[RMDB]
RNA sequence: GGGAACGACUCGAGUAGAGUCGAAAAGGGAUUUUUAGCAUGCUAGGCCAAGAGGGCAUCAAUAAGGUUUUCAAUCAAGCCGGGCUCGCUAAUAUUUUGGGCGAAGUGGCGAUGCAAUCCAUUGAUAAGUAUGAUACUGAUUCGUCAGUAUCAUACUAAAAGAAACAACAACAACAAC
Reactivity to DMS in 0.01 (KOAc 150mM, MgCl2 10mM, bicine 150mM(pH8.5), 24C), signal-to-noise 9, nucleotides 027 to 126: g010g000g000a060u000u000u010u010u010a090g020c050a060u000g010c040u000a130g010g000c030c030a070a090g010a080g000g000g000c030a050u000c070a060a110u010a100a110g000g010u010u000u000u010c120a080a100u010c190a070a080g010c020c020g010g000g010c040u000c040g000c040u000a050a070u010a130u000u000u000u000g010g000g010c030g010a080a110g010u000g000g010c040g000a040u000g010c080a070a060u000c030c030a110u010u000g000a100u010a060
Reactivity to 2A3 in 0.01 (KOAc 150mM, MgCl2 10mM, bicine 150mM(pH8.5), 24C), signal-to-noise 6, nucleotides 027 to 126: g050g010g010a040u070u080u040u110u220a040g000c030a020u050g030c010u050a020g070g000c010c010a040a020g040a060g060g010g000c010a040u060c050a080a120u140a090a090g040g000u020u010u020u140c070a050a070u050c040a050a000g000c010c020g020g030g010c010u000c020g000c020u050a090a060u120a160u140u160u140u130g080g010g010c030g020a090a030g060u070g070g010c010g020a010u040g000c000a010a030u030c030c020a040u040u100g050a070u080a130
Description
This 177-nucleotide RNA was probed chemically with DMS and 2A3. The reactions ran in a buffer of 150 mM KOAc, 10 mM MgCl2 and 150 mM bicine (pH 8.5), at 24 C. The DMS profile rests on 14,294 reads. The 2A3 profile rests on 10,880 reads. For 2A3 the reverse transcriptase was SuperScript II with manganese. For DMS the reverse transcriptase was MarathonRT.